An RNA of 177 nucleotides, treated with DMS and 2A3 and read out base by base. For DMS, 1,245 sequencing reads were counted.

RNA sequence: GGGAACGACUCGAGUAGAGUCGAAAAUCAAGAGCAGGUGAGAGGGAGGGAAGGGCGAGCAGGACCCUUGACCUCAUUCUCGGCUGCAGUGUAUAUUGGCCUGCCUGGUGACCCUCCUUGCUCCUGGCCAAUGGUGUGGGUUCGCCCACACCAUUGGAAAAGAAACAACAACAACAAC
Reactivity to DMS in 0.01 (KOAc 150mM, MgCl2 10mM, bicine 150mM(pH8.5), 24C), signal-to-noise 1, nucleotides 027 to 126: u020c090a120a080g020a230g010c000a020g020g000u000g040a020g000a060g030g020g020a040g000g010g000a080a040g000g000g050c010g010a100g030c110a060g000g000a100c010c000c000u010u000g000a170c000c000u000c000a080u010u020c030u010c010g000g020c060u000g010c020a050g000u000g000u000a070u000a090u010u010g000g040c050c060u000g020c020c030u000g000g030u000g000a200c040c010c030u010c030c030u000u000g000c060u000c020c030u020g000g010
Reactivity to 2A3 in 0.01 (KOAc 150mM, MgCl2 10mM, bicine 150mM(pH8.5), 24C), signal-to-noise 1, nucleotides 027 to 126: u070c010a030a020g080a000g040c020a020g150g240u200g080a000g010a040g000g080g010a040g000g020g050a030a030g040g080g000c020g020a090g120c130a060g050g200a200c020c000c000u020u040g150a220c010c000u000c030a000u040u050c020u040c040g030g000c030u010g020c000a020g010u070g040u010a100u010a070u170u120g100g060c010c060u020g000c000c040u100g010g010u080g010a060c010c000c000u000c010c000u000u010g000c000u000c000c000u010g000g040

The reactions ran in a buffer of 150 mM KOAc, 10 mM MgCl2 and 150 mM bicine (pH 8.5), at 24 C.
The data come from the RNA Mapping Database (RMDB), library OK2TRN.